[RMDB]
RNA sequence: GGGAACGACUCGAGUAGAGUCGAAAACGUACGUGUUUUCACGUACGACGAGACUUUUGUCUCGGAUUGAGCCGUCAUACAGGGCUCCCAUGCGAGGCGAUUGUCCUUAUUGUUCGGAUUGUCGCUUCUUCUCGUAUGGUACAACAGGCUGUAUGUACCAUAUCGGUACCUUCGGGUACCGAUAUGGAAAAGAAACAACAACAACAAC
Reactivity to DMS in 0.01 (KOAc 150mM, MgCl2 10mM, bicine 150mM(pH8.5), 24C), signal-to-noise 2, nucleotides 027 to 156: c030g030u000a020c010g080u000g000u000u010u010u000c020a020c000g000u000a000c000g010a010c030g010a070g000a020c000u000u010u010u000g040u010c000u000c010g010g000a140u020u010g010a030g030c000c000g050u000c030a070u010a030c040a050g010g000g000c010u000c040c000c000a020u010g010c030g010a040g030g000c020g010a040u010u000g010u000c010c020u010u000a090u010u010g000u000u000c220g020g010a040u000u000g020u000c020g000c000u000u020c060u000u000c030u000c010g020u010a010u010g030g020u000a030c050a080a080c080a200g020g010c010u000g000u000a030u000g020u000a300
Reactivity to 2A3 in 0.01 (KOAc 150mM, MgCl2 10mM, bicine 150mM(pH8.5), 24C), signal-to-noise 3, nucleotides 027 to 156: c020g000u020a000c000g000u010g020u010u100u130u300c020a000c000g000u010a000c000g020a000c000g000a000g000a010c020u190u260u300u300g010u000c030u000c030g010g050a150u090u200g010a010g010c020c000g030u050c000a000u000a010c000a000g010g000g010c000u070c120c000c000a000u000g000c000g000a020g050g000c030g000a000u000u040g020u060c010c020u180u110a250u140u300g120u200u170c110g010g000a000u000u050g000u010c000g000c000u140u130c000u090u050c020u020c000g000u020a000u010g000g020u030a030c070a060a010c020a040g240g000c020u010g000u010a000u000g020u040a050
An RNA of 207 nucleotides, treated with DMS and 2A3 and read out base by base. Source: RMDB library OK3TST, as collected in RNAgym. The DMS profile rests on 6,022 reads. For DMS the reverse transcriptase was MarathonRT. The RNA was probed in 150 mM KOAc, 10 mM MgCl2 and 150 mM bicine (pH 8.5) at 24 C.